[RMDB]
RNA sequence: GGGAACGACUCGAGUAGAGUCGAAAAGAUAUGGACCGAUUACACGCAACAGCCUACUGGCUCGGAAACGAGCUUAGGACAUGCGUUGAAUCGGUCCUAAGUCAAAACUUUGAGUUCGCUCAAAGAAGACUCGUGUAAUGUUCGCAUUACACGAGUCAAAAGAAACAACAACAACAAC
Reactivity to 2A3 in 0.01 (KOAc 150mM, MgCl2 10mM, bicine 150mM(pH8.5), 24C), signal-to-noise 2, nucleotides 027 to 126: g030a000u050a020u160g000g030a000c020c010g000a000u020u060a130c020a010c030g000c020a000a140c020a300g090c040c000u080a130c180u190g080g000c000u030c000g030g000a060a030a060c020g010a000g000c000u020u000a000g030g040a000c060a190u160g010c000g020u030u120g000a000a000u020c000g000g000u000c000c000u010a000a000g010u010c010a000a010a040a080c000u000u000u010g000a010g040u070u180c300g040c060u000c030a010a010a000g030a010a030
Reactivity to DMS in 0.01 (KOAc 150mM, MgCl2 10mM, bicine 150mM(pH8.5), 24C), signal-to-noise 2, nucleotides 027 to 126: g010a040u010a300u010g000g000a000c010c000g000a040u000u000a200c060a010c010g010c000a070a090c250a210g000c010c000u010a010c300u010g050g040c000u010c000g000g000a140a050a240c020g000a010g030c000u000u010a000g000g000a030c080a180u000g000c020g020u000u000g000a010a010u000c010g000g000u000c010c000u000a010a080g000u000c040a070a060a170a100c000u000u010u000g000a010g030u000u010c300g020c000u000c020a000a000a000g010a180a130